Conditions: 150 mM KOAc, 10 mM MgCl2 and 150 mM bicine (pH 8.5), 24 C. This 207-nucleotide RNA was probed chemically with DMS and 2A3. For DMS the reverse transcriptase was MarathonRT. It was measured as part of the RMDB library OK3TST.
RNA sequence: GGGAACGACUCGAGUAGAGUCGAAAAAUCAAUGGACAUGUUGCAAAUGGGUGCAAGCAUUGCGGUAUAGAAUGAUGGUGCGGUGGGAGGAGAGACGAUUGAACAUACGUGAGCCCGGCCGAUUUCCACGAAAAUGCCAUGGUUUGCUGUGUGUGUACUCUAGUAUCUCCUUCGGGAGAUACUAGAGAAAAGAAACAACAACAACAAC
Reactivity to DMS in 0.01 (KOAc 150mM, MgCl2 10mM, bicine 150mM(pH8.5), 24C), signal-to-noise 1, nucleotides 027 to 156: a110u020c020a060a170u030g000g000a130c050a090u000g010u000u010g000c030a090a070a080u000g000g000g000u000g020c040a120a130g040c000a100u000u020g010c040g060g060u000a140u010a110g040a060a090u010g020a090u000g010g030u020g000c070g010g040u000g020g000g070a150g030g000a090g010a070g020a090c050g020a170u000u010g000a070a100c050a050u000a100c070g000u000g020a150g020c040c050c030g040g000c000c020g000a200u010u000u010c040c060a120c000g000a060a020a020a140u000g030c000c000a130u000g010g010u000u000u030g000c010u000g030u020g000u000g030u010g000u010a060
Reactivity to 2A3 in 0.01 (KOAc 150mM, MgCl2 10mM, bicine 150mM(pH8.5), 24C), signal-to-noise 2, nucleotides 027 to 156: a000u190c090a050a040u120g040g020a000c010a020u110g030u070u170g060c050a070a070a110u140g050g060g020u030g000c030a030a040g020c050a070u070u140g030c030g010g030u080a080u010a050g050a060a080u060g080a080u010g040g010u030g000c070g010g040u060g030g020g000a020g050g020a040g030a000g030a040c090g020a030u050u170g030a080a020c030a020u110a010c040g010u010g030a030g000c000c010c060g010g000c010c010g000a040u060u100u000c060c050a080c120g020a050a020a000a010u110g000c010c010a020u080g030g000u020u040u090g000c060u030g020u050g020u020g010u010g050u080a040